[RMDB]
RNA sequence: GGGAACGACUCGAGUAGAGUCGAAAAGAGCGGCAGAGGAACUGGCCCGAUGAAGCCCGGCAACCUAACUUUAUUUAAGCGUAAAGUGAAGGUGCUAAUUCCAGCAAAAUGGUGUAUUCCGUUUUGGUUUAUCCGCCCUGGUUCGCCAGGGCGGAAACAAGUUAUUCUCGUUCGCGAGAAUAACUUGAAAAGAAACAACAACAACAAC
Reactivity to 2A3 in 0.01 (KOAc 150mM, MgCl2 10mM, bicine 150mM(pH8.5), 24C), signal-to-noise 1, nucleotides 027 to 156: g040a030g040c130g000g020c010a030g070a050g120g030a040a080c020u030g040g020c070c040c000g010a040u030g040a040a000g000c020c000c000g000g020c020a080a060c000c000u010a020a020c000u030u010u030a050u060u160u090a200a020g110c000g040u000a010a000a020g000u010g050a130a030g000g000u000g000c000u000a020a020u140u020c000c010a000g000c000a030a000a030a010u020g020g010u040g030u190a170u250u000c000c000g000u020u000u000u030g050g020u090u110u050a070u060c000c000g000c000c060c010u000g010g040u030u040c190g040c080c000a020g000g000g010c000g010g000a000a000a000
Reactivity to DMS in 0.01 (KOAc 150mM, MgCl2 10mM, bicine 150mM(pH8.5), 24C), signal-to-noise 1, nucleotides 027 to 156: g000a080g030c020g020g010c020a100g000a170g010g000a010a030c050u000g030g000c050c000c000g020a080u000g020a150a200g030c020c020c060g070g000c010a010a010c000c000u010a170a040c000u000u000u000a030u030u010u000a060a280g050c200g000u020a020a020a030g020u000g010a090a060g000g000u000g030c000u000a010a120u010u010c010c010a180g030c080a020a020a030a030u010g000g010u020g020u000a160u000u000c000c020g020u000u000u000u000g020g050u000u000u000a070u020c000c020g060c000c000c000u000g010g070u010u020c300g020c020c000a020g000g000g040c000g030g010a000a010a040